An RNA of 207 nucleotides, treated with 2A3 and read out base by base. The RNA was probed in 150 mM KOAc, 10 mM MgCl2 and 150 mM bicine (pH 8.5) at 24 C. It was measured as part of the RMDB library OK3TST.
[RMDB]
RNA sequence: GGGAACGACUCGAGUAGAGUCGAAAAACACAGCAUCCUUGCCUUUCUUGUCCUGUGCCACUUUGUGGGGUUGGUGCUUGCCACACUUCUUACAGAAAGUCUGGAAGGCUUUAGGAAUGUGCACCACAUUGCAGGAGCCCUAUCACGUGGAAAGCUACGUAGUCAUCCAGUUCGCUGGAUGACUACGAAAAGAAACAACAACAACAAC
Reactivity to 2A3 in 0.01 (KOAc 150mM, MgCl2 10mM, bicine 150mM(pH8.5), 24C), signal-to-noise 1, nucleotides 027 to 156: a000c030a000c030a000g020c020a120u000c000c000u030u000g000c000c000u120u250u070c100u140u170g110u140c060c000u040g070u100g040c000c010a030c000u050u070u200g060u020g000g000g000g000u000u080g000g000u020g030c010u040u190g020c030c000a000c010a060c000u000u110c020u060u150a050c040a050g110a100a090a000g040u050c030u070g100g050a120a050g030g030c000u000u030u050a010g050g020a020a010u050g070u090g010c020a040c000c000a050c060a100u140u150g040c050a040g020g040a020g000c000c010c000u090a070u090c030a000c100g050u060g010g010a050a070a070g080c010u100a030